[RMDB]
Background: The record gives the reactivity of an RNA of 170 nucleotides to 2A3 and DMS. Conditions: 150 mM KOAc, 10 mM MgCl2 and 150 mM bicine (pH 8.5), 24 C. Source: RMDB library 15KLIB, as collected in RNAgym.

RNA sequence: GGGAACGACUCGAGUAGAGUCGAAAAUGCGGGACCAAAAGGACCUGAAAUCCGAUAUCUCUAUUUUGUUAAAAAUCUUAACAACCUUCAUCGCGGGCAAGUGUUAGGGCACAUUGCUGCGACUGUUACCGUAUCGAGUUCGCUCGAUACAAAAGAAACAACAACAACAAC
Reactivity to 2A3 in 0.01 (KOAc 150mM, MgCl2 10mM, bicine 150mM(pH8.5), 24C), signal-to-noise 9, nucleotides 027 to 129: u150g010c060g010g000g020a040c030c020a040a070a080a160g030g010a040c030c090u140g070a090a030a010u020c010c000g020a030u030a080u100c020u000c010u020a090u070u100u030u020g040u020u030a020a060a040a060a100u060c050u030u020a010a010c030a020a050c020c000u140u130c040a060u020c020g000c030g030g020g000c010a020a010g000u020g040u120u150a180g070g100g000c010a020c080a170u010u020g000c010u010g000c000g020a020c030u040g040u120u090a090c040c080
Reactivity to DMS in 0.01 (KOAc 150mM, MgCl2 10mM, bicine 150mM(pH8.5), 24C), signal-to-noise 9, nucleotides 027 to 129: u020g030c050g030g000g020a070c000c090a050a040a080a170g040g020a080c070c020u040g040a040a040a100u030c030c020g040a090u060a130u060c040u040c030u040a090u030u000u000u000g000u010u000a010a030a060a100a070u060c090u040u040a040a030c050a020a110c080c030u060u070c030a100u020c000g000c030g070g000g050c030a020a030g000u010g030u040u090a060g020g010g010c000a030c060a030u040u000g030c020u040g020c030g030a000c170u000g040u000u000a110c110c160